[RMDB]
RNA sequence: GGGAACGACUCGAGUAGAGUCGAAAAGAAAGAAAGAAAGAAAUCUGACAGAAUGACGGAUUCGAUCGUUGUGGUCGGCGGGCCACCACGUCAUUCCUUCGCACUGUCUCCAGGCAGACCGCCAUAAAAAAGCGGAUCUACUUCGGUAGAUCCGCAAGUACUAUUGCAACUUCGGUUGCAAUAGUACAAAAGAAACAACAACAACAAC
Reactivity to 2A3 in 0.01 (KOAc 150mM, MgCl2 10mM, bicine 150mM(pH8.5), 24C), signal-to-noise 4, nucleotides 027 to 156: g030a000a040a010g050a020a080a010g060a050a110a030g080a050a120a040u100c090u100g010a020c020a020g090a120a220u090g020a020c020g010g000a010u100u090c100g030a070u220c050g020u020u010g000u010g010g010u020c040g040g100c070g040g020g000c000c000a000c000c000a000c000g010u020c010a020u030u010c000c000u030u030c020g030c030a050c030u000g000u010c000u020c030c010a010g030g000c010a020g020a130c040c060g030c030c020a040u250a030a160a020a030a010a010g000c000g000g000a000u000c000u000a000c000u020u070c150g070g010u000a000g000a000u000c000c000g000c000a000a000
Reactivity to DMS in 0.01 (KOAc 150mM, MgCl2 10mM, bicine 150mM(pH8.5), 24C), signal-to-noise 1, nucleotides 027 to 156: g020a050a150a070g050a080a040a050g000a050a060a160g020a130a110a080u000c060u030g030a300c090a050g030a060a090u030g000a000c060g000g000a200u000u010c020g000a070u000c080g020u010u000g040u000g040g030u000c010g000g020c050g020g000g000c030c010a040c010c030a000c030g020u000c030a060u000u000c000c010u000u000c100g000c050a260c030u000g010u010c000u010c020c010a160g010g000c000a030g020a070c040c030g020c020c000a170u050a000a070a090a030a080a300g000c030g030g000a000u000c000u000a000c000u000u000c290g050g000u000a030g000a000u000c000c010g030c000a000a030
About this RNA
The data come from the RNA Mapping Database (RMDB), library M2RFPK. This 207-nucleotide RNA was probed chemically with 2A3 and DMS. The reactions ran in a buffer of 150 mM KOAc, 10 mM MgCl2 and 150 mM bicine (pH 8.5), at 24 C. The 2A3 profile rests on 4,170 reads. Reactivities are given for positions 27 through 156. High DMS reactivity at an A or C suggests that its Watson-Crick edge is free.